[RMDB]
RNA sequence: GGGAACGACUCGAGUAGAGUCGAAAAUAGAGCACCCUGAACAUGUAGACACAGUGGUAAUGCACCUUUCCUUGUGGCUAUUUUGCCACACUAGGAACUCUUUACAUUCCAGGGGUCCCAUUCCAGAGAUCCCAAUAUGCAGAUAUUCUACUGUCUACACUUGUUGCUUAUUCGUAAGCAACAAGUGAAAAGAAACAACAACAACAAC
Reactivity to DMS in 0.01 (KOAc 150mM, MgCl2 10mM, bicine 150mM(pH8.5), 24C), signal-to-noise 3, nucleotides 027 to 156: u000a100g020a120g020c060a130c020c010c000u000g010a080a060c110a040u000g000u000a020g010a080c070a040c110a020g000u010g020g010u000a070a090u010g000c030a060c110c050u010u000u000c000c000u000u010g040u010g000g040c020u000a230u010u010u000u000g010c020c000a020c020a020c080u000a010g000g020a060a040c210u000c060u000u000u000a020c040a060u000u000c050c040a110g000g010g030g020u000c010c000c010a170u010u020c080c050a170g000a090g000a070u000c010c010c000a080a130u010a070u010g010c040a050g010a240u000a050u000u000c050u010a120c030u010g000u000c020u010a100
Reactivity to 2A3 in 0.01 (KOAc 150mM, MgCl2 10mM, bicine 150mM(pH8.5), 24C), signal-to-noise 9, nucleotides 027 to 156: u180a020g070a020g040c060a070c010c020c000u020g010a050a020c040a120u070g010u040a010g020a030c040a020c060a150g040u050g040g030u110a120a050u140g030c040a070c010c030u040u060u010c010c000u010u020g000u000g010g000c010u090a210u280u260u230u250g000c010c000a000c010a010c050u050a010g000g000a010a020c010u020c020u100u130u080a060c020a040u090u060c050c030a030g000g000g000g010u010c010c010c010a050u150u050c040c030a040g000a010g010a180u020c000c000c020a030a040u180a100u180g010c020a010g060a110u050a100u170u090c030u070a080c010u020g040u030c030u030a020